Record summary
Structure probing data (2A3 and DMS) for a 177-nucleotide construct. 2A3 adducts were read by reverse transcription with SuperScript II with manganese. The reactions ran in a buffer of 150 mM KOAc, 10 mM MgCl2 and 150 mM bicine (pH 8.5), at 24 C. Values cover nucleotides 27 to 126. The DMS profile rests on 1,466 reads. The 2A3 profile rests on 2,087 reads.
[RMDB]
RNA sequence: GGGAACGACUCGAGUAGAGUCGAAAAGCCGAAGAGUUCGCUCUUCGGCGACGAAUUUGGCGUAGAUGAGAGUCUACAGUACUAGGCAUCCCAGAUGUACAAAUAAGCAUUGCUUCGGCAAUGCUAAGAUUAAUCGCUGGUUCGCCAGCGAUUAAUCAAAAGAAACAACAACAACAAC
Reactivity to 2A3 in 0.01 (KOAc 150mM, MgCl2 10mM, bicine 150mM(pH8.5), 24C), signal-to-noise 2, nucleotides 027 to 126: g000c010c000g000a010a000g030a000g020u080u120c160g020c090u000c000u020u000c010g020g040c000g000a010c000g050a030a140u190u110u180g090g010c040g010u030a010g010a090u030g030a040g000a000g070u000c000u000a000c010a050g020u010a060c010u020a010g050g000c010a030u010c000c030c000a050g050a160u130g000u040a030c040a020a090a060u210a160a000g000c020a000u000u010g000c010u000u110c200g070g000c010a010a000u000g010c000u020a020a000
Reactivity to DMS in 0.01 (KOAc 150mM, MgCl2 10mM, bicine 150mM(pH8.5), 24C), signal-to-noise 2, nucleotides 027 to 126: g020c000c000g000a020a040g010a010g010u000u000c150g030c000u000c000u000u000c020g000g020c010g000a040c070g000a100a160u000u000u000g010g040c110g050u000a040g000a020u010g000a190g000a120g000u010c010u000a000c060a100g000u020a040c020u000a130g000g010c070a080u000c010c000c020a140g010a160u000g020u010a060c060a100a080a060u000a080a050g010c000a010u000u000g010c000u000u010c210g000g010c010a010a020u000g000c010u000a020a060